Record summary
Chemical mapping of a 177-nucleotide RNA with DMS and 2A3. The RNA was probed in 150 mM KOAc, 10 mM MgCl2 and 150 mM bicine (pH 8.5) at 24 C. 2A3 adducts were read by reverse transcription with SuperScript II with manganese. The 2A3 profile rests on 4,218 reads. It was measured as part of the RMDB library M2PK90. DMS adducts were read by reverse transcription with MarathonRT.
RNA sequence: GGGAACGACUCGAGUAGAGUCGAAAAGUCAAGAUGUGUAGGAUAGGUGGGAGGCUUUGAAGUGUCGACGCCAGUCUGCAUGGAGCCGACCUUGAAAUACCACCCUUUAAUGGAAAAACAAAGUGAACACCUUUAACUGAUUCGUCAGUUAAAGGUGAAAAGAAACAACAACAACAAC
Reactivity to DMS in 0.01 (KOAc 150mM, MgCl2 10mM, bicine 150mM(pH8.5), 24C), signal-to-noise 7, nucleotides 027 to 126: g010u000c040a090a140g010a050u000g010u000g030u000a030g000g000a070u000a030g010g010u000g000g000g010a100g010g010c200u000u000u010g010a080a080g000u000g010u000c260g010a010c010g010c060c070a060g010u000c070u000g010c070a050u000g000g000a020g020c010c010g000a060c170c030u000u000g010a040a030a060u000a090c020c010a060c020c010c050u000u000u000a060a090u000g010g000a030a030a060a090a100c120a070a070a110g020u010g010a100a160
Reactivity to 2A3 in 0.01 (KOAc 150mM, MgCl2 10mM, bicine 150mM(pH8.5), 24C), signal-to-noise 3, nucleotides 027 to 126: g080u060c020a030a030g040a090u030g050u010g030u090a020g040g080a050u010a050g030g040u010g020g060g020a120g040g000c030u200u150u030g040a020a010g010u010g010u070c010g010a000c000g020c020c010a010g010u050c030u050g000c000a040u030g000g020a000g000c000c000g010a020c000c000u010u010g020a000a030a000u040a010c010c000a010c000c000c000u080u060u020a150a100u200g070g050a130a040a010a000a050c070a030a130a030g150u150g130a080a020